[RMDB]
RNA sequence: GGGAACGACUCGAGUAGAGUCGAAAAAAAACUCAAAGAGCUUCGUGAAUCUGGAGAGAUCGAGCUGGACGAAGAUGAUCUAGCUGCUGUCGCCGUCGAAGAGGACGAAGCCAUUUCCUCUGCUGCGCUGAAAAUGCUGGUUCGCCAGCAUUUUCAGAAAAGAAACAACAACAACAAC
Reactivity to DMS in 0.01 (KOAc 150mM, MgCl2 10mM, bicine 150mM(pH8.5), 24C), signal-to-noise 2, nucleotides 027 to 126: a000a020a000a110c030u000c050a100a120a070g000a170g000c000u000u000c000g020u000g000a110a030u000c000u030g020g030a030g000a110g000a030u020c130g010a000g000c010u000g040g020a020c070g010a160a100g020a090u020g000a150u000c000u000a000g000c000u000g040c040u010g000u000c020g000c060c010g010u040c230g000a110a030g010a050g020g010a060c040g010a050a000g000c010c020a130u000u010u000c020c030u000c040u000g000c030u000g000c120g000
Reactivity to 2A3 in 0.01 (KOAc 150mM, MgCl2 10mM, bicine 150mM(pH8.5), 24C), signal-to-noise 2, nucleotides 027 to 126: a000a000a030a030c130u150c080a060a100a040g060a040g040c010u020u030c010g090u040g150a200a030u000c050u060g040g000a090g000a000g000a010u070c040g020a010g000c010u000g000g000a040c080g230a230a110g120a120u300g040a020u020c000u000a000g000c030u050g020c060u090g000u040c000g010c100c000g090u230c050g130a160a070g000a020g130g000a030c030g010a000a030g000c000c000a030u080u080u000c000c000u060c040u060g000c010u100g000c060g000
Source: RMDB library OK1LIB, as collected in RNAgym.
Structure probing data (DMS and 2A3) for a 177-nucleotide construct.
For DMS, 2,319 sequencing reads were counted.
For 2A3, 811 sequencing reads were counted.
For 2A3 the reverse transcriptase was SuperScript II with manganese.
For DMS the reverse transcriptase was MarathonRT.